[RMDB]
RNA sequence: GGGAACGACUCGAGUAGAGUCGAAAAGCGAUGUUCUUGUAGGCAUUCGGUGAUCAAGGACGAAGGCUGGAGUAUCGAAAGUGAUUAGAUACCGCAGUAGUUCCAGCAGUAAAAGAUGCCGACAUGCUUUUAGCGUGUUCUUCGGAACACGCUAAAAAAAAGAAACAACAACAACAAC
Reactivity to 2A3 in 0.01 (KOAc 150mM, MgCl2 10mM, bicine 150mM(pH8.5), 24C), signal-to-noise 3, nucleotides 027 to 126: g060c030g060a080u060g030u030u000c010u030u020g060u130a040g020g010c000a000u010u020c010g000g070u130g090a040u020c030a020a100g100g050a020c060g050a100a010g130g000c000u010g000g010a040g010u010a000u010c010g050a050a070a060g110u150g050a130u100u050a070g010a030u020a030c030c000g070c030a020g020u120a020g010u120u050c010c010a000g010c000a010g060u160a000a100a000a000g030a000u010g000c000c010g000a010c010a020u010g000c000
Reactivity to DMS in 0.01 (KOAc 150mM, MgCl2 10mM, bicine 150mM(pH8.5), 24C), signal-to-noise 3, nucleotides 027 to 126: g010c130g000a080u000g050u000u000c100u000u030g010u020a110g010g000c030a020u010u000c010g000g010u010g040a060u010c020a110a190g000g000a030c070g020a130a180g000g020c000u000g000g010a080g010u000a000u000c000g000a140a080a070g010u050g000a200u010u020a200g000a050u030a010c000c080g010c130a060g000u000a120g030u020u000c030c020a070g000c110a080g000u010a030a060a100a180g010a010u000g000c020c030g000a010c260a000u000g000c010